[RMDB]
RNA sequence: GGGAACGACUCGAGUAGAGUCGAAAAACGGAUUUACGUCCCCGUCGCCUUCGUUCGCGUAUGGAUUACGAAUCGAGUCUCGACCGAGCGAUGGAGGACGUUCCCGACAUCGGAGGCGACGAACAGCAUCCCCAGCAUGGUUCGCCAUGCUGGGGAUAAAAGAAACAACAACAACAAC
Reactivity to 2A3 in 0.01 (KOAc 150mM, MgCl2 10mM, bicine 150mM(pH8.5), 24C), signal-to-noise 1, nucleotides 027 to 126: a000c030g030g020a030u030u100u300a040c040g020u020c010c010c000c020g000u020c010g000c000c060u010u010c000g050u040u070c030g020c040g080u080a090u200g210g010a050u060u120a040c040g100a040a060u060c020g040a010g130u070c010u000c030g030a030c030c020g000a020g050c030g040a050u130g080g030a080g050g000a000c000g000u010u000c000c010c000g010a010c010a040u100c010g000g010a000g000g000c040g000a030c010g000a060a030c020a000g070c010
Reactivity to DMS in 0.01 (KOAc 150mM, MgCl2 10mM, bicine 150mM(pH8.5), 24C), signal-to-noise 2, nucleotides 027 to 126: a160c100g030g000a170u010u010u030a050c010g000u000c060c020c020c020g020u000c010g020c040c070u000u000c010g010u000u020c100g000c110g010u000a040u010g020g000a060u000u030a080c110g010a110a090u010c070g010a110g010u000c000u000c030g000a120c080c040g000a070g010c050g020a040u010g000g010a070g000g010a170c020g000u000u010c020c000c000g020a090c250a060u000c030g040g020a050g010g020c010g000a020c000g000a100a060c230a100g040c170
The record gives the reactivity of an RNA of 177 nucleotides to 2A3 and DMS.
For DMS the reverse transcriptase was MarathonRT.
For 2A3 the reverse transcriptase was SuperScript II with manganese.
The 2A3 profile rests on 1,333 reads.
For DMS, 1,467 sequencing reads were counted.
Source: RMDB library OK2TRN, as collected in RNAgym.